[RMDB]
RNA sequence: GGGAACGACUCGAGUAGAGUCGAAAAGGAGGACGAAGCAUAUUUCUGUUUCUGGAGGAUUAUUUACAAUCUGCCGGAAAGUCUUGCAGGUGGCUGGGAUAUGUUCAGUCUGGUAGAAUUAAGCACGAAAACGUGUCCUUGUUCGCAAGGACACGAAGUUGUACAGCUACUUCGGUAGCUGUACAACAAAAGAAACAACAACAACAAC
Reactivity to 2A3 in 0.01 (KOAc 150mM, MgCl2 10mM, bicine 150mM(pH8.5), 24C), signal-to-noise 3, nucleotides 027 to 156: g040g020a010g010g030a010c020g030a050a020g000c020a040u030a060u140u040u060c020u080g080u060u050u030c030u050g040g030a030g000g010a010u010u020a120u090u300u130a010c010a020a020u010c030u060g080c000c000g000g020a040a020a010g020u010c030u060u090g050c050a020g040g120u060g030g000c040u010g040g020g000a020u030a010u020g080u180u060c070a020g010u000c000u010g010g090u100a060g070a090a040u160u180a070a070g110c080a030c090g140a010a040a060a060c010g000u010g000u000c000c000u010u000g000u020u010c070g000c130a000a000g000g040a040c010a000c000g010a000a000
Reactivity to DMS in 0.01 (KOAc 150mM, MgCl2 10mM, bicine 150mM(pH8.5), 24C), signal-to-noise 1, nucleotides 027 to 156: g020g020a190g010g010a130c020g010a170a160g000c050a020u010a030u010u010u010c010u000g030u000u010u000c010u000g010g020a090g030g010a000u000u000a070u000u000u000a120c110a030a010u000c010u000g000c000c000g050g030a040a030a050g000u000c040u010u020g030c090a250g010g020u010g010g010c030u000g030g000g050a050u000a050u000g020u000u010c070a220g020u020c010u000g010g000u000a070g000a090a130u010u010a030a090g010c010a090c030g000a100a050a110a150c000g070u000g000u010c010c010u000u000g010u000u010c300g020c030a020a000g000g020a020c010a000c020g000a010a020
Overview:
An RNA of 207 nucleotides, treated with 2A3 and DMS and read out base by base. The DMS profile rests on 1,888 reads. For 2A3 the reverse transcriptase was SuperScript II with manganese. Conditions: 150 mM KOAc, 10 mM MgCl2 and 150 mM bicine (pH 8.5), 24 C.